[RMDB]
RNA sequence: GGGAACGACUCGAGUAGAGUCGAAAAGCAUCCGACAUGGUGCUGGGAUGCAAAUAUCAGCACAAGGCUUUUGCCGAAUUACACCAGAAGAACGCAUGGCUGGUGGAUCAUCCAUGCAUCGUCUCAUAGAGUCGACGAGACGAAAGAUGUCGACAGACGCCUCCUGAUUAUUCGUAAUCAGGAGGCGAAAAGAAACAACAACAACAAC
Reactivity to 2A3 in 0.01 (KOAc 150mM, MgCl2 10mM, bicine 150mM(pH8.5), 24C), signal-to-noise 2, nucleotides 027 to 156: g060c030a040u000c010c000g030a060c090a070u160g080g000u030g000c000u020g000g020g000a020u040g020c000a020a080a000u250a110u150c000a000g030c000a040c040a150a080g010g000c090u100u100u270u300g020c010c020g020a030a050u260u070a070c030a010c040c020a000g000a030a020g050a180a040c120g000c040a040u020g000g030c000u040g000g030u020g010g010a030u070c010a000u000c000c000a000u010g000c000a000u050c040g020u000c000u000c000a090u160a050g050a020g090u080c040g010a030c030g000a000g040a040c080g030a010a080a010g030a000u160g020u040c020g000a050c040a020g120a040